Structure probing data (2A3) for a 207-nucleotide construct.
The RNA was probed in 150 mM KOAc, 10 mM MgCl2 and 150 mM bicine (pH 8.5) at 24 C.
Values cover nucleotides 27 to 156.
For 2A3, 508 sequencing reads were counted.
The data come from the RNA Mapping Database (RMDB), library M2RFPK.
For 2A3 the reverse transcriptase was SuperScript II with manganese.

RNA sequence: GGGAACGACUCGAGUAGAGUCGAAAAACCUUAUUUUGAGAAGCUGAGGGAUUUGGCCCAUAGAAGCUUCAGCAACCGACUUUAAAUAGCACGGUGCUAAUACCAACGAGCAGCUCGAAUGAUAAGUAAAACGUUGACAAGUUCGCUUGUCAACGAAGCCAUAACCAUUCUUCGGAAUGGUUAUGGCAAAAGAAACAACAACAACAAC
Reactivity to 2A3 in 0.01 (KOAc 150mM, MgCl2 10mM, bicine 150mM(pH8.5), 24C), signal-to-noise 1, nucleotides 027 to 156: a000c040c010u140u150a270u050u120u170u120g070a060g000a010a000g020c020u070g000a000g000g040g000a080u060u030u110g020g000c010c030c020a070u110a140g040a020a000g000c000u000u000c010a000g020c010a020a030c000c000g020a010c000u170u160u220a030a250a300u200a090g000c000a010c030g000g010u000g000c020u030a000a000u000a050c010c010a060a020c040g060a000g070c080a000g000c050u070c070g140a090a090u020g080a090u180a170a000g070u060a010a060a090a130c000g000u000u000g000a000c000a000a000g020u040u040c080g000c170u000u040g020u000c000a000a000c000g000a000a040